Chemical mapping of a 207-nucleotide RNA with 2A3 and DMS.
RNA sequence: GGGAACGACUCGAGUAGAGUCGAAAAUAGCCGUUAUGCGCGAAGCGGUGUAGCGUCACUUUGAUGGCGGUACUAUGAAUUGAUGCAAGGUGUGGAGCGACCUUAAACAGUUCUGGCGGUGCUCUGAAAAACAAAUAGGCGUUCGCGCCUAUUUGAAUCAGAAAGAACUGUUCGCAGUUCUUUCUGAAAAAGAAACAACAACAACAAC
Reactivity to 2A3 in 0.01 (KOAc 150mM, MgCl2 10mM, bicine 150mM(pH8.5), 24C), signal-to-noise 5, nucleotides 027 to 156: u100a000g030c010c010g010u040u050a080u160g050c050g010c030g020a020a020g030c020g020g040u060g020u060a030g050c000g020u010c010a020c070u200u170u250g160a220u090g060g020c020g010g050u020a030c040u060a060u150g050a070a040u090u040g030a060u100g090c030a030a020g000g000u020g020u070g040g010a020g030c020g020a020c000c000u050u100a110a100a010c000a050g000u030u020c010u010g030g010c020g010g020u040g020c000u010c020u070g040a100a030a020a010a010c000a000a000a000u000a000g010g000c010g040u030u040c200g000c000g000c060c000u000a000u000u000u000g000a000a020
Reactivity to DMS in 0.01 (KOAc 150mM, MgCl2 10mM, bicine 150mM(pH8.5), 24C), signal-to-noise 1, nucleotides 027 to 156: u000a140g030c000c000g000u000u000a030u000g000c070g030c050g030a170a090g010c030g020g040u000g000u000a030g000c030g060u000c040a020c060u010u020u010g020a100u030g000g000c000g000g000u000a070c020u000a030u000g000a090a120u000u000g020a090u000g000c030a090a080g030g020u010g040u000g000g010a140g040c030g000a060c030c030u010u000a030a070a130c060a090g000u000u000c030u000g020g040c060g020g020u000g010c030u000c040u000g030a070a060a090a080a100c000a020a020a010u000a060g030g000c020g030u000u010c300g000c040g070c000c000u000a000u010u000u010g000a070a130
Source information: For 2A3, 4,046 sequencing reads were counted.